The data come from the RNA Mapping Database (RMDB), library OK3TST. An RNA of 207 nucleotides, treated with DMS and 2A3 and read out base by base. The 2A3 profile rests on 660 reads. The DMS profile rests on 1,986 reads. Conditions: 150 mM KOAc, 10 mM MgCl2 and 150 mM bicine (pH 8.5), 24 C. DMS adducts were read by reverse transcription with MarathonRT.

RNA sequence: GGGAACGACUCGAGUAGAGUCGAAAAUUCAAAUUCCCGUCCCCACUUGUCGACGCCAACGACUCGUUUACGCUGUUCGUUGAGGGGUCCUUUGAGAUAGAAUACACUGGCGACGGGACCGUCACUUUCCGGUCGCUUGAAGGUGGCGUUGAGAAGCACCGCAAACAUAGUUCGCUAUGUUUGCGGUAAAAGAAACAACAACAACAAC
Reactivity to DMS in 0.01 (KOAc 150mM, MgCl2 10mM, bicine 150mM(pH8.5), 24C), signal-to-noise 1, nucleotides 027 to 156: u010u000c140a110a070a190u000u000c010c020c010g050u000c010c000c020c000a140c100u000u010g000u010c020g000a080c020g030c030c040a070a160c010g040a060c040u000c010g070u010u000u000a060c120g030c040u050g000u010u000c080g020u010u000g020a120g040g000g060g000u000c000c020u020u000u020g010a180g010a190u000a140g010a170a070u000a110c040a080c060u020g020g040c060g000a070c010g030g020g000a040c110c000g000u020c020a050c040u010u010u000c000c050g040g030u000c120g000c050u010u000g010a060a040g000g000u010g010g040c010g040u000u010g010a000g000a170a110g010c080
Reactivity to 2A3 in 0.01 (KOAc 150mM, MgCl2 10mM, bicine 150mM(pH8.5), 24C), signal-to-noise 2, nucleotides 027 to 156: u110u040c040a040a000a010u070u000c050c000c030g010u000c100c080c010c000a040c020u130u110g170u090c010g030a020c060g000c050c000a030a000c030g100a020c010u030c020g100u050u100u130a070c050g040c090u090g160u230u120c030g000u000u090g020a110g000g000g000g000u020c000c050u050u130u060g150a170g010a020u120a120g200a170a110u280a050c040a000c130u040g030g020c020g000a000c020g000g000g000a020c020c000g040u030c010a020c100u020u070u000c060c000g200g000u150c080g100c120u040u180g030a040a030g050g010u000g000g000c000g060u030u060g000a030g000a060a050g050c030